[RMDB]
RNA sequence: GGGAACGACUCGAGUAGAGUCGAAAACGUGAAACUUCGGUUUCACGAAAAAGCGUACUACAUGUGGUCCAGGGAGCGUUGGUUCCCAAAUAGGAACUGACGCGAAGAACUGGACGUAACAUCAUGUAUCGCAAAAACCAUGCCUUCGGGCAUGGAACUCAAUAUUGUCCUUCGGGACAAUAUUGAGAAAAGAAACAACAACAACAAC
Reactivity to 2A3 in 0.01 (KOAc 150mM, MgCl2 10mM, bicine 150mM(pH8.5), 24C), signal-to-noise 3, nucleotides 027 to 156: c020g020u000g010a000a000a000c010u040u080c180g120g020u000u000u010c020a020c020g100a050a000a000a020a000g030c040g030u110a090c050u020a020c010a000u010g000u010g040g000u000c000c020a000g010g000g020a040g010c000g000u000u000g020g000u000u000c010c030c030a140a180a110u260a050g000g010a010a000c000u010g000a010c020g000c000g000a050a010g020a010a010c000u000g020g000a000c000g000u020a000a000c000a090u160c000a000u030g000u010a010u300c030g000c030a030a050a000a020a000c000c000a000u010g000c000c010u060u100c240g100g000g020c010a000u000g010g000a000a020
Reactivity to DMS in 0.01 (KOAc 150mM, MgCl2 10mM, bicine 150mM(pH8.5), 24C), signal-to-noise 2, nucleotides 027 to 156: c010g050u000g010a010a000a030c000u000u000c270g050g000u000u010u000c020a000c020g020a030a050a090a130a070g000c040g010u000a080c140u000a060c050a010u010g030u030g020g010u010c000c000a040g010g020g000a300g020c000g040u000u020g010g030u000u000c000c000c010a020a070a160u020a020g030g070a060a050c000u000g010a020c000g020c000g090a050a050g020a120a190c000u010g000g030a000c000g040u010a050a140c050a060u030c010a050u000g000u000a000u010c010g010c000a030a040a100a110a130c020c000a010u000g000c000c000u000u020c300g010g000g010c000a000u000g000g010a010a050